[RMDB]
RNA sequence: GGGAACGACUCGAGUAGAGUCGAAAAGAUGACCUUGUGGAACGACGCCGGCGAGAGGGCCGCGAGCUCCGCCGUCCACCAGUCGGGCGGCGACCUCGUCGGGAACAGCACCUCGUUGCAGAUCCUGCCGGUAGGUCUGUUUCGACAGACCUACCGGAAAAGAAACAACAACAACAAC
Reactivity to 2A3 in 0.01 (KOAc 150mM, MgCl2 10mM, bicine 150mM(pH8.5), 24C), signal-to-noise 1, nucleotides 027 to 126: g080a090u140g060a100c020c000u010u110g020u100g060g010a140a000c040g020a010c000g050c000c000g020g010c010g000a030g000a090g020g020g000c000c030g160c050g010a040g000c000u070c090c030g060c000c000g000u000c000c000a050c110c030a170g080u270c080g000g000g000c000g000g000c000g000a030c010c010u000c000g020u000c140g000g010g020a050a000c030a000g060c000a010c040c000u010c010g060u080u080g040c000a020g000a080u010c000c000u050g010
The record gives the reactivity of an RNA of 177 nucleotides to 2A3. The 2A3 profile rests on 651 reads. The reactions ran in a buffer of 150 mM KOAc, 10 mM MgCl2 and 150 mM bicine (pH 8.5), at 24 C.